Conditions: 150 mM KOAc, 10 mM MgCl2 and 150 mM bicine (pH 8.5), 24 C. Chemical mapping of a 207-nucleotide RNA with 2A3 and DMS. DMS adducts were read by reverse transcription with MarathonRT. Reactivities are given for positions 27 through 156. For 2A3 the reverse transcriptase was SuperScript II with manganese. The DMS profile rests on 4,092 reads.

[RMDB]
RNA sequence: GGGAACGACUCGAGUAGAGUCGAAAAUGCUUAUUCGUAAGCACCAUCUCCUAAGUCCCAUACAACAGCAUCCUGGCUCGCAACAGCCUUCGGAAACGAAGGACAUGCGAGCAGGAUGACAUGUAUGGGAUAUGGAACAAGACCGUUUCGACGGUAAAACGCUAUUGUUUUUCGAAACAAUAGCGUUAAAAGAAACAACAACAACAAC
Reactivity to 2A3 in 0.01 (KOAc 150mM, MgCl2 10mM, bicine 150mM(pH8.5), 24C), signal-to-noise 8, nucleotides 027 to 156: u100g000c010u040u010a040u110u140c260g120u070a020a000g000c020a050c030c020a160u120c070u080c080c000u050a130a060g030u000c000c010c000a000u010a000c040a140a010c050a060g060c000a010u020c000c000u160g300g030c000u020c000g010c000a020a150c050a200g060c000c030u000u010c000g030g040a050a060a030c000g000a000a000g020g020a020c010a130u040g000c000g000a000g000c010a000g000g000a010u000g010a010c000a030u020g000u000a000u000g000g000g000a000u000a000u010g000g000a010a020c040a070a030g100a060c020c010g010u070u160u300c240g110a040c000g000g010u070a090a190
Reactivity to DMS in 0.01 (KOAc 150mM, MgCl2 10mM, bicine 150mM(pH8.5), 24C), signal-to-noise 2, nucleotides 027 to 156: u000g020c020u010u000a030u000u030c300g010u010a010a000g010c020a070c040c030a180u020c080u030c020c030u020a060a270g030u000c000c020c010a030u000a010c000a040a030c120a150g010c000a030u000c000c030u000g050g060c010u020c000g060c010a100a050c090a190g040c000c020u000u010c010g020g000a200a130a240c000g000a020a000g000g020a040c040a300u000g020c000g000a020g020c000a000g010g010a000u000g010a030c080a300u020g050u000a020u000g000g080g020a000u000a040u000g000g030a070a150c060a120a100g000a080c030c000g010u000u000u000c080g000a040c000g010g000u000a060a100